[RMDB]
RNA sequence: GGGAACGACUCGAGUAGAGUCGAAAAGAAAUUCGGUGAAACACAACAAAUGAGGUUUCAGUUAUUUGGGCUCGUGAGAGCAGCCUGGGGAACCUGGUUAUAAUAGCGGCGCUAUCAGAAAUUCAACAUAAUGACACAAUUUCGAUUGUGUCAUUAUAAAAGAAACAACAACAACAAC
Reactivity to DMS in 0.01 (KOAc 150mM, MgCl2 10mM, bicine 150mM(pH8.5), 24C), signal-to-noise 9, nucleotides 027 to 126: g010a080a070a080u010u010c060g000g030u000g000a070a040a050c060a050c100a100a130c160a060a090a100u020g020a090g000g000u000u000u000c020a050g000u020u010a060u010u010u010g020g010g010c000u000c040g010u030g000a160g010a030g000c020a070g010c020c010u000g000g000g000g040a060a070c020c010u000g010g010u000u010a060u010a060a060u020a070g010c050g000g000c090g010c040u000a030u010c050a100g010a060a060a080u010u010c060a060a120c220
Reactivity to 2A3 in 0.01 (KOAc 150mM, MgCl2 10mM, bicine 150mM(pH8.5), 24C), signal-to-noise 9, nucleotides 027 to 126: g070a010a080a010u160u120c060g020g010u080g040a050a070a010c040a000c010a130a070c040a060a150a080u180g030a110g040g030u010u030u020c010a010g070u070u100a150u120u130u100g050g020g000c010u010c040g040u090g070a100g000a010g050c020a010g030c010c000u020g000g000g010g040a010a020c000c010u020g030g000u080u080a120u050a170a090u080a040g030c060g060g000c020g010c050u040a030u170c020a020g120a040a100a040u130u100c010a020a040c010